[RMDB]
RNA sequence: GGGAACGACUCGAGUAGAGUCGAAAAGCUUGCGAGUUCGCUCGCAAGCAAAAGUCAGAAAGAUCAAAAAGAUCAUUAAAGCGACUGACACGCAAAAUAAUAAAACUAUUCCCUUCGGGGAAUAGAAGAGUAUGGGUUAGUUCGCUAACCCAUACUCAAAAGAAACAACAACAACAAC
Reactivity to 2A3 in 0.01 (KOAc 150mM, MgCl2 10mM, bicine 150mM(pH8.5), 24C), signal-to-noise 1, nucleotides 027 to 126: g020c030u020u000g000c000g010a000g030u060u110c090g060c130u000c010g010c010a000a000g020c000a000a000a020a020g030u000c010a010g100a090a210a000g000a050u030c070a080a230a230a050a090g010a040u010c020a060u030u200a300a150a000g050c040g150a170c010u000g000a000c000a000c080g030c000a000a130a050a000u190a110a020u090a120a080a000a040c020u010a020u000u000c000c000c000u030u060c200g090g000g020g010a000a000u000a000g000a010a000